[RMDB]
RNA sequence: GGGAACGACUCGAGUAGAGUCGAAAAAAAAGAAGGGAACGGUUGCUGAUGAUGUAGUUCGAAACUCUCACAAUUUAUAUCACAGUGGCUGUUCUUUUUUGUUAUUAGGUGUCGGUUCGCCGACACCCCAACGACAUAGGUUCGCCUAUGUCGUUGGAAAAGAAACAACAACAACAAC
Reactivity to 2A3 in 0.01 (KOAc 150mM, MgCl2 10mM, bicine 150mM(pH8.5), 24C), signal-to-noise 1, nucleotides 027 to 126: a010a000a000a020g070a010a010g030g000g010a000a000c010g040g000u010u000g040c010u010g040a300u010g000a020u000g070u020a020g010u020u060c050g040a140a100a120c150u140c020u070c130a010c040a040a030u130u300u040a020u010a000u030c020a000c000a000g000u020g020g030c020u020g000u020u030c010u000u010u000u000u020u020g010u010u040a070u020u080a020g040g000u010g000u010c000g000g030u040u080c190g070c060c000g000a000c000a010c000c000
Reactivity to DMS in 0.01 (KOAc 150mM, MgCl2 10mM, bicine 150mM(pH8.5), 24C), signal-to-noise 2, nucleotides 027 to 126: a060a080a040a100g000a000a000g000g010g020a030a000c010g000g010u000u000g000c000u000g010a130u000g000a010u000g030u000a010g000u000u010c130g010a090a060a120c230u000c130u000c090a110c130a040a020u000u000u000a010u000a030u000c000a080c000a000g010u000g000g000c000u000g000u000u000c000u000u020u000u010u000u000g000u000u000a130u020u000a150g030g000u000g010u000c000g010g010u000u010c210g020c000c000g010a020c000a000c000c000

An RNA of 177 nucleotides, treated with 2A3 and DMS and read out base by base.
The reactions ran in a buffer of 150 mM KOAc, 10 mM MgCl2 and 150 mM bicine (pH 8.5), at 24 C.
DMS adducts were read by reverse transcription with MarathonRT.